[RMDB]
RNA sequence: GGGAACGACUCGAGUAGAGUCGAAAAUCCGGCAAGAGGCGUGGAGAGAGGGCCGCGGUGCUCUGGAGUAGAGGCUCUGCCUUCGAAACACCAUCGAUCGUCCCUUCUUCUUUACCUUCUCCUGGCUCUUCCGAUGAGACGCGACCGGUGGCAUCACGUUCUCAAUUAUGUUCGCAUAAUUGAGAACAAAAGAAACAACAACAACAAC
Reactivity to 2A3 in 0.01 (KOAc 150mM, MgCl2 10mM, bicine 150mM(pH8.5), 24C), signal-to-noise 5, nucleotides 027 to 156: u040c010c010g000g020c080a010a030g010a010g030g050c120g080u070g010g010a000g000a000g000a010g010g000g000c010c000g030c000g010g000u000g000c000u000c000u010g000g000a000g000u000a000g000a000g010g000c020u050c210u300g040c020c000u110u180c000g000a000a000a000c010a030c170c000a000u010c000g060a300u040c000g000u010c000c000c000u060u030c010u080u000c000u020u050u060a030c000c010u020u020c010u030c010c030u040g050g000c010u020c000u100u030c040c040g050a080u160g020a020g010a020c070g010c040g090a070c030c010g000g010u020g030g020c030a060u080c070a050c120
Reactivity to DMS in 0.01 (KOAc 150mM, MgCl2 10mM, bicine 150mM(pH8.5), 24C), signal-to-noise 2, nucleotides 027 to 156: u020c030c020g030g020c070a090a080g020a080g030g000c110g000u000g030g010a050g000a070g020a070g010g040g080c050c030g020c010g020g070u000g030c030u030c010u020g010g040a220g040u000a080g010a160g040g000c020u030c140u010g070c010c000u010u000c030g010a300a200a220c010a050c120c010a060u000c000g000a090u010c050g000u000c000c000c000u000u000c040u000u000c030u010u000u010a080c040c010u010u000c070u000c040c060u000g000g030c100u000c010u020u010c020c040g000a130u000g000a120g000a080c030g000c060g010a200c060c010g000g040u010g010g030c040a180u000c120a140c200